This 207-nucleotide RNA was probed chemically with DMS and 2A3. 2A3 adducts were read by reverse transcription with SuperScript II with manganese. DMS (dimethyl sulfate) methylates the pairing face of unpaired adenines and cytosines.
[RMDB]
RNA sequence: GGGAACGACUCGAGUAGAGUCGAAAAGACAGCGCCCAACGCUUCACAACCUGAAAGAAGCGCCUGUUAUCAGGACGGUCGAUCCAUUUACCGGUGCAGACCUCUGCAAACACCGGGUUGCAGAACAUAGAGGGAAAUUUGUUCGCAAAUUUCCCAAUCAGAGGGUAAAGUUCGCUUUACCCUCUGAAAAAGAAACAACAACAACAAC
Reactivity to DMS in 0.01 (KOAc 150mM, MgCl2 10mM, bicine 150mM(pH8.5), 24C), signal-to-noise 1, nucleotides 027 to 156: g010a060c040a080g010c040g000c050c010c000a120a070c000g000c030u030u000c010a180c090a100a170c130c110u000g020a100a160a180g010a060a040g010c020g020c010c070u000g030u010u000a090u010c030a080g030g010a060c030g030g020u000c030g000a110u020c040c030a140u010u000u000a090c020c040g000g000u010g030c020a130g010a100c020c030u000c040u000g010c050a210a060a010c010a090c020c020g000g020g000u000u000g000c000a090g010a120a090c080a090u000a080g010a150g000g010g000a000a030a010u000u000u000g050u010u000c290g070c020a020a010a060u000u000u000c010c000c000a010a050
Reactivity to 2A3 in 0.01 (KOAc 150mM, MgCl2 10mM, bicine 150mM(pH8.5), 24C), signal-to-noise 2, nucleotides 027 to 156: g040a010c090a000g010c000g100c050c010c020a110a020c030g000c040u000u020c020a060c040a230a150c020c060u100g020a050a080a040g030a000a040g060c050g030c040c060u080g030u140u180a170u270c020a010g030g000a010c020g020g030u060c000g040a100u000c030c040a040u130u110u130a120c050c020g020g030u090g000c040a010g040a210c000c070u070c020u070g000c070a050a010a040c030a010c080c030g090g030g030u010u070g000c020a000g040a160a040c040a070u200a040g120a200g000g000g000a000a020a010u000u010u010g040u020u050c140g000c150a000a020a000u010u000u010c000c000c000a000a000